[RMDB]
RNA sequence: GGGAACGACUCGAGUAGAGUCGAAAAAAUAUAACAGAGCAGUUAUAUUCCAUACAACUUCGUUUCGUGAAGACUGGAGAACACUUUUAGAUUACUGUAAUGCUAAAAUAGUAAACACUGAAGAUGCCUACAGCGACGAUUUCGAUCGUCGCUGUAGAAAAGAAACAACAACAACAAC
Reactivity to 2A3 in 0.01 (KOAc 150mM, MgCl2 10mM, bicine 150mM(pH8.5), 24C), signal-to-noise 1, nucleotides 027 to 126: a000a000u080a010u000a040a040c100a000g300a000g300c140a000g030u000u000a000u000a030u030u040c000c000a000u100a140c090a060a050c000u060u080c050g130u000u000u230c140g030u140g090a000a040g010a090c090u120g000g000a220g050a060a130c050a100c090u050u080u050u130a050g000a050u030u030a000c000u010g030u270a040a190u140g050c160u170a090a090a090a000u040a010g000u000a020a020a020c010a000c000u010g040a030a000g030a130u160g000c010